Conditions: 150 mM KOAc, 10 mM MgCl2 and 150 mM bicine (pH 8.5), 24 C. Structure probing data (DMS and 2A3) for a 177-nucleotide construct. Reactivities are given for positions 27 through 126. High 2A3 reactivity points to a flexible backbone, as in loops and unpaired stretches. For 2A3, 1,023 sequencing reads were counted.

RNA sequence: GGGAACGACUCGAGUAGAGUCGAAAAUAGAAGAGGAGUCUCCUGGACGCCCCGCCCGGUCGGGAUGGGCCGCAGUUCCCGACGAGGAGCCCGCAGGUGGGAGGAUCAGCCACCGGAGGGGACGCGACCUACGAUAAGAGUUCGCUCUUAUCGUAGGAAAAGAAACAACAACAACAAC
Reactivity to DMS in 0.01 (KOAc 150mM, MgCl2 10mM, bicine 150mM(pH8.5), 24C), signal-to-noise 2, nucleotides 027 to 126: u010a060g010a100a090g020a080g010g000a160g000u000c020u000c090c040u020g010g020a120c070g000c090c000c000c040g000c030c020c010g050g000u000c070g010g000g000a050u000g020g000g030c030c030g020c080a160g000u000u000c000c000c000g000a070c020g000a100g000g000a140g020c000c000c010g000c120a150g010g010u010g000g020g010a100g020g020a050u000c110a160g010c010c010a030c010c030g040g010a300g000g010g010g000a060c040g020c170g010a130
Reactivity to 2A3 in 0.01 (KOAc 150mM, MgCl2 10mM, bicine 150mM(pH8.5), 24C), signal-to-noise 1, nucleotides 027 to 126: u110a020g060a090a000g000a050g060g040a080g090u000c000u030c020c040u000g060g030a060c050g040c020c010c010c020g020c020c020c010g080g120u120c060g120g000g010a080u080g010g010g000c020c020g000c040a030g000u010u010c000c000c000g010a000c010g010a060g080g030a040g080c060c110c020g000c060a000g020g040u020g040g000g040a050g100g070a100u070c010a000g070c010c000a020c000c000g020g060a020g060g010g000g030a020c020g020c030g020a080